Conditions: 150 mM KOAc, 10 mM MgCl2 and 150 mM bicine (pH 8.5), 24 C.
The record gives the reactivity of an RNA of 207 nucleotides to DMS and 2A3.
The DMS profile rests on 1,380 reads.
[RMDB]
RNA sequence: GGGAACGACUCGAGUAGAGUCGAAAAGUUCGUGAUCGUACGUACUCUCGUGAGUGUGAGAGAGAGAGUACUCACUCUCGAACGAGUACGUUCUCGAACGAACUCGAACGUACUCACACGAGAGAGAGUUCACGUGAACGAGAACUCUCGAGUGUACCCUGAGACUUACAUUCGUGUAAGUCUCAGGAAAAGAAACAACAACAACAAC
Reactivity to DMS in 0.01 (KOAc 150mM, MgCl2 10mM, bicine 150mM(pH8.5), 24C), signal-to-noise 1, nucleotides 027 to 156: g000u020u000c010g010u030g060a160u000c030g000u090a080c050g000u060a060c050u050c000u010c020g060u040g000a160g050u030g020u010g020a250g050a100g000a250g000a120g030a090g000u000a150c100u050c030a200c020u000c000u030c000g030a240a170c170g000a050g030u000a010c000g030u000u010c000u040c040g020a070a080c000g000a050a020c080u000c010g000a180a040c000g000u000a020c000u000c040a200c030a200c050g010a140g040a080g040a060g050a060g030u000u000c010a060c140g010u010g000a070a100c050g000a220g020a070a030c010u000c020u000c000g000a060g020u000g010u030a110c080
Reactivity to 2A3 in 0.01 (KOAc 150mM, MgCl2 10mM, bicine 150mM(pH8.5), 24C), signal-to-noise 3, nucleotides 027 to 156: g030u020u060c010g010u040g060a110u030c030g060u120a050c020g000u020a020c040u020c000u010c030g040u070g050a040g000u110g030u110g020a040g020a000g000a000g010a000g000a030g080u060a080c000u000c010a010c000u000c000u000c010g040a150a090c050g000a020g000u000a000c000g010u020u030c080u050c050g030a080a050c040g010a040a000c010u000c020g040a090a050c000g040u070a040c010u030c000a020c000a010c040g050a060g000a000g000a000g000a020g080u000u020c030a020c070g150u210g080a060a050c040g000a010g020a120a020c010u010c000u000c000g020a040g020u010g020u040a050c000

Values cover nucleotides 27 to 156.